The data come from the RNA Mapping Database (RMDB), library TTRINS. An RNA of 177 nucleotides, treated with DMS and read out base by base. Reactivities are given for positions 27 through 126. The RNA was probed in 150 mM KOAc, 10 mM MgCl2 and 150 mM bicine (pH 8.5) at 24 C.

RNA sequence: GGGAACGACUCGAGUAGAGUCGAAAAGAUAUGGACCCAGAUACUUUCCAUGGGGGUGACAUGCUUAAAGUCGGAAACGACUUGGGAGCAACAGCACCCCCAUGGAAAGUAUGUGGGUCCUAAGUCAUCUAGUGGUAUUCUUCGGAAUACCACUAGAAAAAGAAACAACAACAACAAC
Reactivity to DMS in 0.01 (KOAc 150mM, MgCl2 10mM, bicine 150mM(pH8.5), 24C), signal-to-noise 2, nucleotides 027 to 126: g010a040u000a300u000g010g040a000c000c000c000a000g000a010u000a000c000u000u000u000c000c000a030u000g020g020g000g000g020u010g000a070c120a300u000g030c000u000u000a200a030a020g010u010c000g000g000a140a130a260c020g010a020c000u000u000g000g020g010a020g000c000a010a060c260a120g010c020a010c000c000c010c000c000a010u000g020g000a000a000a020g000u000a000u010g000u000g000g000g010u000c000c000u000a010a090g010u000c040a160